[RMDB]
RNA sequence: GGGAACGACUCGAGUAGAGUCGAAAAGAACUUUGGCCGGCUCGGAAUAGAAUCAGGGGGUGCAAACUGCCCACUGGCAGAAGGGAUUAUAGCAAAUGCGUACCCUAUUGCAAUACAGCCCGGCCAACAUAGACUACUCUAUUCGUAGAGUAGUCAAUAGACUAUUCUACUUCGGUAGAAUAGUCUAAAAAGAAACAACAACAACAAC
Reactivity to 2A3 in 0.01 (KOAc 150mM, MgCl2 10mM, bicine 150mM(pH8.5), 24C), signal-to-noise 3, nucleotides 027 to 156: g060a090a030c020u040u000u040g000g010c000c000g010g030c050u050c130g070g050a110a100u160a150g070a080a170u210c050a050g000g020g030g000g000u030g010c100a180a060a090c050u080g010c000c000c020a050c030u050g030g000c010a010g040a060a040g020g010g010a040u190u120a090u250a090g020c040a140a250a190u260g000c020g020u040a030c000c000c000u040a090u010u170g020c010a030a010u050a140c020a040g030c010c020c040g000g000c020c000a000a000c000a000u090a020g010a000c000u010a000c000u010c000u000a030u070u030c130g060u070a000g010a000g000u000a000g000u000c000a000a010
Reactivity to DMS in 0.01 (KOAc 150mM, MgCl2 10mM, bicine 150mM(pH8.5), 24C), signal-to-noise 2, nucleotides 027 to 156: g000a080a120c050u000u000u010g010g020c000c010g000g000c050u000c070g020g000a090a140u030a140g020a180a100u010c030a050g020g020g020g040g050u000g010c100a090a020a170c170u010g030c010c010c040a050c080u000g030g000c060a040g000a190a070g000g040g010a130u000u000a090u000a090g030c030a050a140a140u000g020c060g020u000a070c000c010c030u000a120u000u000g000c030a040a130u010a090c090a070g020c050c030c030g040g010c000c000a000a000c090a140u000a160g010a010c000u010a030c000u010c000u000a030u000u000c300g010u000a010g000a030g000u010a000g000u000c000a000a090